RNA sequence: GGGAACGACUCGAGUAGAGUCGAAAAUAGAGGAUCAAAGUAGAGGAGUAUGUGCUGAUUAAAAGGUGGCAGCUUCUUGAUUAUCAUUGGUUCUUGCUGAGGAAUGUAUUCUAAUUAGGCCAGUUACUUCUGUAUAACAGUUCGCUGUUAUACAGAAAAAAGAAACAACAACAACAAC
Reactivity to DMS in 0.01 (KOAc 150mM, MgCl2 10mM, bicine 150mM(pH8.5), 24C), signal-to-noise 7, nucleotides 027 to 126: u030a110g010a020g000g010a010u000c010a020a010a070g030u000a100g010a020g010g000a020g010u000a010u000g000u000g000c000u000g000a110u030u060a090a130a160a270g000g010u000g000g000c000a010g000c010u000u000c000u010u000g010a100u030u020a050u010c050a060u000u010g010g010u000u000c010u000u000g010c110u010g010a110g000g010a050a070u020g000u010a060u010u000c030u000a050a130u010u010a100g000g000c030c060a070g010u020u010a040c130
Reactivity to 2A3 in 0.01 (KOAc 150mM, MgCl2 10mM, bicine 150mM(pH8.5), 24C), signal-to-noise 5, nucleotides 027 to 126: u160a000g050a000g010g010a000u020c020a010a010a050g010u030a030g020a000g010g010a010g010u020a020u020g010u010g000c010u020g010a130u260u220a070a060a030a040g030g000u020g010g000c000a000g000c000u000u000c000u000u020g030a050u050u090a060u080c050a010u010u030g010g010u020u000c000u020u090g030c030u050g040a080g020g090a120a060u100g050u130a160u070u080c050u070a080a150u100u080a040g060g020c020c010a010g020u040u030a040c040
Chemical mapping of a 177-nucleotide RNA with DMS and 2A3. For 2A3 the reverse transcriptase was SuperScript II with manganese. The data come from the RNA Mapping Database (RMDB), libraries RFM100 and RFMREP. The reactions ran in a buffer of 150 mM KOAc, 10 mM MgCl2 and 150 mM bicine (pH 8.5), at 24 C.